[RMDB]
RNA sequence: GGGAACGACUCGAGUAGAGUCGAAAACUGGCUUAUUCAGCGGCUCAGUGACCUGUGAAGACCCAGCUUCUUUACCCCUUUCUGUUCUGCCGUCUUCUAGGCUGCAGUCUGCCCUGCUGGCCUUGAGGAUGACUAUCAGAUUCGUCUGAUAGUCAUCAAAAGAAACAACAACAACAAC
Reactivity to DMS in 0.01 (KOAc 150mM, MgCl2 10mM, bicine 150mM(pH8.5), 24C), signal-to-noise 9, nucleotides 027 to 126: c030u000g010g010c040u000u010a100u010u010c110a080g020c100g010g000c030u000c050a060g010u000g010a080c040c020u000g010u000g010a080a070g000a120c110c040c020a070g010c050u000u000c040u000u000u000a190c070c020c020c060u000u000u010c040u010g010u000u000c030u000g010c070c050g000u000c030u000u000c070u010a040g010g000c000u000g010c010a040g010u000c070u000g010c100c090c010u000g010c040u000g020g000c050c010u000u000g000a120g010
Reactivity to 2A3 in 0.01 (KOAc 150mM, MgCl2 10mM, bicine 150mM(pH8.5), 24C), signal-to-noise 4, nucleotides 027 to 126: c020u010g010g010c020u080u100a060u240u160c050a040g060c050g060g000c040u030c140a050g030u030g110a130c010c010u070g040u060g100a050a020g040a050c000c000c050a020g020c040u090u020c000u090u140u220a150c020c010c010c000u020u130u030c050u060g060u080u020c030u050g040c020c010g040u030c010u090u020c010u020a020g010g020c000u020g000c000a010g020u020c050u060g040c000c000c000u020g000c030u060g020g010c010c000u030u050g030a030g070
The data come from the RNA Mapping Database (RMDB), library OK2TST. Structure probing data (DMS and 2A3) for a 177-nucleotide construct. The reactions ran in a buffer of 150 mM KOAc, 10 mM MgCl2 and 150 mM bicine (pH 8.5), at 24 C. For 2A3, 11,664 sequencing reads were counted. Reactivities are given for positions 27 through 126.